[RMDB]
RNA sequence: GGGAACGACUCGAGUAGAGUCGAAAAUUCUAAAAAUUGAAUACUAUCAGCAAUAACUUCCGUAACGUAUACACGUUGACCUUCCUUAUUUUCAUAGUUCCGCGUUUGUAACCUACCAUCUACGCCCGCCAACGAUCCUUUAGAUAGGUAUUUAUUAAAUGGCAGUAAAUUUCGAUUUACUGCCAUUAAAAGAAACAACAACAACAAC
Reactivity to DMS in 0.01 (KOAc 150mM, MgCl2 10mM, bicine 150mM(pH8.5), 24C), signal-to-noise 2, nucleotides 027 to 156: u010u000c030u010a050a040a040a140a160u000u020g000a100a080u000a090c020u010a100u000c030a090g010c060a100a090u000a050a080c040u000u000c020c000g020u000a060a020c040g000u000a130u000a120c140a090c070g030u010u000g000a100c000c040u000u000c020c010u010u010a090u000u000u010u000c090a090u000a060g030u000u000c080c030g020c100g000u000u000u000g000u000a070a050c050c010u000a060c040c040a080u000c050u000a060c020g000c010c010c090g020c110c020a070a060c020g000a100u010c020c050u010u000u010a080g000a100u000a030g010g000u010a090u000u000u000a070u010u010a090